[RMDB]
RNA sequence: GGGAACGACUCGAGUAGAGUCGAAAAAAAGAUAUGGAACAAUGGGAGCUCACGCGAGGGACACUAUAAACUCGGAAACGAGUUUACGAAUGUCCCUCGAGCGAAGAACAUUGUUCCUAAGUCAAAAGUAAAUUAGUCUGUUCGCAGACUAAUUUACAAAAGAAACAACAACAACAAC
Reactivity to 2A3 in 0.01 (KOAc 150mM, MgCl2 10mM, bicine 150mM(pH8.5), 24C), signal-to-noise 2, nucleotides 027 to 126: a000a010a030g080a010u110a050u160g000g000a000a010c000a000a030u010g050g030g010a090g290c040u000c020a040c050g140c070g000a010g020g000g000a000c000a000c040u030a000u040a090a020a000c010u010c020g050g060a030a080a040c020g030a000g000u030u040u000a000c000g110a300a280u020g000u000c000c000c010u010c000g000a000g020c020g040a100a010g010a020a010c000a000u010u010g000u000u020c000c000u000a070a010g020u000c020a050a130a020a110
Reactivity to DMS in 0.01 (KOAc 150mM, MgCl2 10mM, bicine 150mM(pH8.5), 24C), signal-to-noise 3, nucleotides 027 to 126: a040a060a080g010a040u010a300u000g020g010a030a000c000a000a000u010g000g000g010a220g060c100u000c010a050c030g020c050g000a000g030g010g000a010c000a030c100u000a300u010a020a010a010c010u000c010g010g000a100a110a260c000g010a010g000u000u000u000a010c080g000a050a060u000g000u000c000c000c010u000c000g000a010g030c010g010a070a020g010a300a230c000a010u000u000g000u000u010c000c000u010a010a060g000u010c030a070a070a110a210